[RMDB]
RNA sequence: GGGAACGACUCGAGUAGAGUCGAAAAGCACGCUUUGCGUCUACAAUAAGCGGAAUUACGAUAUCUCUAACAGCAUGAUUUUUGCCGCUGUUCUUUACGCUAUUUUUACCACUAUUUUCAUUGUCGGAUACGGCACUAGGUUCGCCUAGUGCCGUAUAAAAGAAACAACAACAACAAC
Reactivity to 2A3 in 0.01 (KOAc 150mM, MgCl2 10mM, bicine 150mM(pH8.5), 24C), signal-to-noise 1, nucleotides 027 to 126: g060c030a020c050g020c020u160u120u170g010c060g070u000c040u050a090c070a130a030u100a150a000g010c020g000g050a060a030u170u080a040c040g030a050u020a120u080c060u030c010u050a030a030c000a050g050c020a030u080g090a080u110u120u180u080u190g050c000c010g020c020u000g000u040u050c000u000u130u020a020c010g010c020u000a070u040u040u000u110u020a020c000c030a010c050u080a170u080u050u060u070c090a100u000u180g110u080c010g050g050
Reactivity to DMS in 0.01 (KOAc 150mM, MgCl2 10mM, bicine 150mM(pH8.5), 24C), signal-to-noise 2, nucleotides 027 to 126: g050c120a050c060g000c040u000u000u000g020c190g000u000c050u000a110c130a070a080u000a010a050g000c020g010g000a120a100u000u000a120c090g000a130u000a050u000c030u000c050u010a060a120c160a040g000c110a070u020g000a120u000u010u000u020u000g010c060c040g010c010u000g010u020u000c130u010u000u010a090c060g000c050u000a050u000u000u000u000u000a220c020c010a070c070u000a120u000u010u000u020c070a160u010u000g030u000c100g000g000